[RMDB]
RNA sequence: GGGAACGACUCGAGUAGAGUCGAAAAGGCUUAAUGCUUCAGUCCUUCGGGCAAUGAAGCCCUUCGAAGCUCGCAAGGCGGACAAGGUUAGUAGCGAAGCGCACUAUAGCGACGGCCAUCGUUGUAGGAAUACACCUAUCUUCGGAUAGGUGUAUUCAAAAGAAACAACAACAACAAC
Reactivity to 2A3 in 0.01 (KOAc 150mM, MgCl2 10mM, bicine 150mM(pH8.5), 24C), signal-to-noise 1, nucleotides 027 to 126: g030g000c040u060u100a120a010u220g000c010u010u050c060a050g010u040c010c000u030u070c130g060g000g000c050a090a070u200g040a100a000g000c040c000c000u000u000c000g030a020a000g000c000u000c020g090c030a050a030g000g000c020g000g000a010c000a000a000g020g060u100u120a050g070u090a040g110c060g020a080a020g060c070g000c050a030c020u030a040u040a080g000c000g010a040c040g050g040c010c040a030u080c050g060u030u050g000u030a000g060
Reactivity to DMS in 0.01 (KOAc 150mM, MgCl2 10mM, bicine 150mM(pH8.5), 24C), signal-to-noise 3, nucleotides 027 to 126: g010g040c030u000u000a090a160u000g020c010u000u000c060a080g010u000c020c040u010u000c140g030g000g010c070a150a100u000g000a070a090g010c070c010c000u000u000c020g010a300a220g010c040u000c030g040c270a140a300g000g010c020g000g000a200c150a060a030g000g010u000u020a070g030u020a090g010c070g000a080a040g000c070g000c100a120c030u010a080u000a040g020c020g000a100c170g020g020c080c060a160u000c020g010u010u010g010u010a040g000
Conditions: 150 mM KOAc, 10 mM MgCl2 and 150 mM bicine (pH 8.5), 24 C. This 177-nucleotide RNA was probed chemically with 2A3 and DMS. For 2A3 the reverse transcriptase was SuperScript II with manganese.